[RMDB]
RNA sequence: GGGAACGACUCGAGUAGAGUCGAAAAGAUAUGGACGAUUUCCUCAUGUUCAACGUUGAAAGAAAUGGUAAGCUCGGAAACGAGCUUACCAUUUCUGGAGUUGACAUGAGGUAGUCGUCCUAAGUCAUCAUAUAAUGUCCUUCGGGACAUUAUAUGAAAAAGAAACAACAACAACAAC
Reactivity to DMS in 0.01 (KOAc 150mM, MgCl2 10mM, bicine 150mM(pH8.5), 24C), signal-to-noise 5, nucleotides 027 to 126: g000a040u010a300u000g010g010a000c000g010a020u000u000u000c000c000u000c010a000u000g010u020u000c000a010a010c000g010u000u020g000a160a190a020g000a010a010a010u000g000g000u000a010a000g010c000u010c000g000g010a120a110a270c010g010a000g010c000u000u000a000c000c000a000u000u000u000c000u000g010g000a050g020u000u000g000a020c000a000u000g010a010g010g020u000a000g020u000c000g010u000c000c010u000a010a060g010u000c030a230

This 177-nucleotide RNA was probed chemically with DMS. The DMS profile rests on 11,260 reads. Values are in units of 0.01, from 0 to 300, in steps of 10.